[RMDB]
RNA sequence: GGGAACGACUCGAGUAGAGUCGAAAAGACCUUCCGGCAGGUAUGUGAGGCAUUUGCUCCUGAGGCGAGAAAUGGAUUGGUCAAGCUAAAAUACAAAGGGGUCUUCACAAACCUCUUUACAACAAUGACCACCAUUCGUUUUCGAACGAAUGGUGGUAAAAGAAACAACAACAACAAC
Reactivity to 2A3 in 0.01 (KOAc 150mM, MgCl2 10mM, bicine 150mM(pH8.5), 24C), signal-to-noise 3, nucleotides 027 to 126: g050a020c000c000u020u010c000c030g010g000c040a040g090g010u160a110u140g120u050g050a020g120g050c060a020u030u030u220g030c010u000c010c050u100g050a080g050g060c060g050a070g100a040a050a000u200g020g060a050u020u160g060g010u000c010a000a000g000c000u160a080a070a050a120u140a070c090a050a020a010g050g020g000g000u000c020u090u080c230a080c000a070a130a000c000c000u000c000u030u060u020a020c080a090a000c050a090a190u250g040
Reactivity to DMS in 0.01 (KOAc 150mM, MgCl2 10mM, bicine 150mM(pH8.5), 24C), signal-to-noise 2, nucleotides 027 to 126: g040a140c020c000u010u000c090c040g000g000c020a040g000g000u000a010u000g000u000g030a140g010g030c220a090u000u000u000g100c020u000c040c010u020g010a180g080g000c050g000a190g030a080a060a190u000g000g010a070u020u010g000g000u010c060a020a210g040c110u020a010a070a050a160u000a090c120a000a000a000g010g000g030g030u000c000u000u000c190a220c190a060a210a030c000c000u000c030u000u000u060a020c300a100a090c180a100a060u000g000
About this RNA:
Chemical mapping of a 177-nucleotide RNA with 2A3 and DMS. Conditions: 150 mM KOAc, 10 mM MgCl2 and 150 mM bicine (pH 8.5), 24 C. Reactivities are given for positions 27 through 126. It was measured as part of the RMDB library OK1LIB.